This 177-nucleotide RNA was probed chemically with DMS and 2A3. Source: RMDB library OK1LIB, as collected in RNAgym. For 2A3 the reverse transcriptase was SuperScript II with manganese. Reactivities are given for positions 27 through 126. Conditions: 150 mM KOAc, 10 mM MgCl2 and 150 mM bicine (pH 8.5), 24 C.
[RMDB]
RNA sequence: GGGAACGACUCGAGUAGAGUCGAAAAGCAAAUACCAAUUUUCAAUAGAUGAUUUGGAGGGUAAGGACAGUUCCAAUUACAUUUUACUCAAGAAGAUUCUUGAUUCAAGCUCUUCAUGUCAAGUUUAAAUAUGGUCAGUCUUCGGACUGACCAUAUUAAAAGAAACAACAACAACAAC
Reactivity to DMS in 0.01 (KOAc 150mM, MgCl2 10mM, bicine 150mM(pH8.5), 24C), signal-to-noise 2, nucleotides 027 to 126: g000c090a020a030a040u030a020c120c010a110a090u060u000u010u020c090a120a030u020a090g000a020u060g020a020u000u010u040g020g020a000g040g000g010u050a020a260g000g000a060c130a010g000u010u030c000c050a110a300u010u000a050c120a070u000u000u010u000a170c180u040c020a120a000g000a130a090g030a070u020u010c040u000u070g020a120u000u040c080a130a250g000c300u000c000u030u000c070a080u040g010u000c050a070a140g000u010u000u030a080
Reactivity to 2A3 in 0.01 (KOAc 150mM, MgCl2 10mM, bicine 150mM(pH8.5), 24C), signal-to-noise 2, nucleotides 027 to 126: g030c000a070a030a020u170a050c020c010a010a150u040u230u190u180c110a120a150u020a090g120a120u100g000a020u110u000u020g000g000a000g000g090g070u080a070a120g050g080a030c000a020g040u150u000c050c000a030a070u100u050a050c040a140u080u120u100u000a170c100u080c020a030a030g040a060a050g190a280u300u000c010u090u190g120a230u080u120c150a160a000g010c000u010c000u000u000c020a020u010g040u010c000a040a140g030u030u100u100a010